This 207-nucleotide RNA was probed chemically with DMS and 2A3. The reactions ran in a buffer of 150 mM KOAc, 10 mM MgCl2 and 150 mM bicine (pH 8.5), at 24 C. It was measured as part of the RMDB library OK3TST. The 2A3 profile rests on 9,504 reads. For DMS, 9,138 sequencing reads were counted. Values cover nucleotides 27 to 156.
RNA sequence: GGGAACGACUCGAGUAGAGUCGAAAAGGGCUUGAGCCAUCGCCCGAAUAAGAUGGAUGAUACAAGUCGACAUCGUACGCGACCUAGAACGUACUCAUUGAAGUGCGAAAGCACGAAGUCCGACGAGUCUGGGACGAUCAUCAGGCAAGACUUAGAACGUAAAUAAUGACUUCGGUCAUUAUUUACGAAAAGAAACAACAACAACAAC
Reactivity to DMS in 0.01 (KOAc 150mM, MgCl2 10mM, bicine 150mM(pH8.5), 24C), signal-to-noise 4, nucleotides 027 to 156: g010g010g010c030u000u010g010a110g030c030c040a090u000c040g020c020c010c020g000a120a120u000a070a150g010a100u000g010g000a100u000g010a110u000a100c100a050a130g020u000c010g010a070c030a250u000c040g000u000a030c020g010c070g010a170c090c070u000a120g010a170a130c010g020u000a050c010u010c050a200u000u000g000a110a140g020u000g000c000g020a100a060a150g030c060a050c010g000a070a110g010u000c020c010g020a060c020g000a090g010u000c020u010g010g000g000a060c040g010a080u010c030a060u010c040a090g010g000c020a080a050g020a110c050u000u000a140g010a100a210
Reactivity to 2A3 in 0.01 (KOAc 150mM, MgCl2 10mM, bicine 150mM(pH8.5), 24C), signal-to-noise 9, nucleotides 027 to 156: g040g000g000c030u110u140g030a020g020c030c020a050u060c040g010c010c000c010g020a090a120u210a060a050g060a050u120g040g010a010u030g010a010u060a090c080a160a040g020u020c010g010a010c020a230u030c020g020u050a150c030g040c150g020a010c000c010u020a020g020a070a010c010g000u020a000c000u010c050a170u080u300g060a180a000g010u010g000c010g060a180a060a010g070c040a010c090g010a020a000g000u000c010c010g000a000c000g000a010g010u000c040u070g040g050g020a010c050g020a030u030c020a010u010c010a010g050g000c050a060a020g030a040c020u050u070a040g060a180a010